[RMDB]
RNA sequence: GGGAACGACUCGAGUAGAGUCGAAAAGAAGAGAAUACAAGGCUGACAAAACCCUGUCCCUACCUCCACGUGGUGUCGGCUGGAUAGUGCUGCAUUAUGUUGCAUUUAUCAACUGGGAAGGAGAAGAAAUAGUACGAUCCUUCGGGAUCGUACUAUUAAAAGAAACAACAACAACAAC
Reactivity to DMS in 0.01 (KOAc 150mM, MgCl2 10mM, bicine 150mM(pH8.5), 24C), signal-to-noise 4, nucleotides 027 to 126: g000a100a100g020a120g020a130a090u030a050c110a040a100g000g000c030u010g010a050c060a090a070a100a100c030c040c020u020g020u020c000c020c020u000a080c040c020u000c030c050a110c150g000u030g010g020u010g030u010c030g000g040c040u020g000g000a040u000a000g000u000g000c000u000g000c000a170u040u020a070u040g050u010u000g010c040a010u010u000u030a040u020c010a060a070c070u000g000g000g040a080a060g000g000a160g000a150a100g000a090
Reactivity to 2A3 in 0.01 (KOAc 150mM, MgCl2 10mM, bicine 150mM(pH8.5), 24C), signal-to-noise 4, nucleotides 027 to 126: g120a030a010g120a000g060a120a050u120a140c100a060a160g030g020c010u010g030a020c050a040a080a060a100c020c000c000u020g060u010c000c000c010u010a030c000c000u030c040c080a090c040g090u120g070g000u010g010u010c010g010g000c010u010g000g010a010u020a010g030u010g010c010u040g000c010a040u100u170a140u300g010u010u010g000c000a020u080u070u200a030u040c000a010a050c070u030g000g020g030a040a030g050g040a050g050a080a000g070a020